[RMDB]
Structure probing data (2A3 and DMS) for a 177-nucleotide construct. Source: RMDB library OK2TST, as collected in RNAgym. DMS adducts were read by reverse transcription with MarathonRT. Conditions: 150 mM KOAc, 10 mM MgCl2 and 150 mM bicine (pH 8.5), 24 C. For DMS, 918 sequencing reads were counted.
RNA sequence: GGGAACGACUCGAGUAGAGUCGAAAAGGAUCACCGCGUGGCAACCGCCGACCGCACGGACGGUCAGCUCCGCUAACGGCAGCUCGUCGCCAACGUGCACCGCCCGCCAUGGCUCGCCCAGCUGCGCGAGCCUCUCCCACUUCGGUGGGAGAGGCUCAAAAGAAACAACAACAACAAC
Reactivity to 2A3 in 0.01 (KOAc 150mM, MgCl2 10mM, bicine 150mM(pH8.5), 24C), signal-to-noise 1, nucleotides 027 to 126: g050g010a120u050c010a010c070c030g000c020g060u030g030g010c000a000a050c060c050g020c050c020g040a070c050c000g000c040a070c050g060g040a060c040g020g020u040c040a000g000c000u070c040c060g000c080u040a190a020c090g030g060c050a010g000c010u040c070g070u080c020g040c000c040a050a060c090g050u050g020c000a030c060c030g020c010c030c010g000c060c010a070u070g000g030c010u020c020g020c000c000c020a000g000c050u060g010c040g030c020
Reactivity to DMS in 0.01 (KOAc 150mM, MgCl2 10mM, bicine 150mM(pH8.5), 24C), signal-to-noise 1, nucleotides 027 to 126: g040g000a030u010c030a160c040c060g030c010g040u000g010g020c110a120a110c080c060g000c040c000g000a050c060c080g080c040a060c050g010g000a110c050g010g000u000c130a040g000c010u000c080c010g000c160u000a090a070c080g010g010c080a060g000c000u020c090g020u000c080g000c030c020a060a110c010g040u010g000c060a070c100c070g000c030c010c020g010c040c070a040u000g010g030c010u000c080g000c030c060c030a220g010c110u000g000c110g000c090
Annotation: For 2A3 the reverse transcriptase was SuperScript II with manganese.